An RNA of 177 nucleotides, treated with 2A3 and DMS and read out base by base. The RNA was probed in 150 mM KOAc, 10 mM MgCl2 and 150 mM bicine (pH 8.5) at 24 C. For 2A3, 3,624 sequencing reads were counted. For DMS, 1,872 sequencing reads were counted. For DMS the reverse transcriptase was MarathonRT. The data come from the RNA Mapping Database (RMDB), library TTRDEL.
[RMDB]
RNA sequence: GGGAACGACUCGAGUAGAGUCGAAAAGAUAUGGAUUGUGUUGAGCUAGGGUCGGAAACGACCCAUAGCAAUGAUGCAUUGUCCUAAGUCAAAGCUGUUUUGAUUAGUUCGCUAAUCAAAACAGCAACACACAAGACACGUUCGCGUGUCUUGUGUGAAAAGAAACAACAACAACAAC
Reactivity to 2A3 in 0.01 (KOAc 150mM, MgCl2 10mM, bicine 150mM(pH8.5), 24C), signal-to-noise 1, nucleotides 027 to 126: g020a000u000a010u040g000g000a000u030u000g020u010g010u080u040g000a000g000c010u010a020g010g040g000u000c010g020g030a000a010a000c010g000a010c000c000c000a010u020a010g010c010a050a300u020g010a000u010g030c010a020u050u030g000u000c000c020u010a030a010g010u000c080a100a050a120g020c010u000g000u010u000u030u010g010a010u010u000a020g020u070u060c300g020c160u000a000a010u000c000a000a000a000a000c010a000g000c010a010a000
Reactivity to DMS in 0.01 (KOAc 150mM, MgCl2 10mM, bicine 150mM(pH8.5), 24C), signal-to-noise 1, nucleotides 027 to 126: g000a020u000a030u010g000g000a020u000u000g010u000g000u020u000g010a010g030c000u000a070g000g000g000u000c000g010g000a000a030a050c000g010a020c000c000c020a000u000a000g010c000a280a090u010g010a120u000g000c000a000u000u010g010u000c000c000u000a000a140g000u000c000a130a080a070g010c010u000g000u010u000u000u000g000a010u000u000a000g020u000u020c270g000c000u000a000a000u000c000a000a000a010a000c000a010g000c000a020a040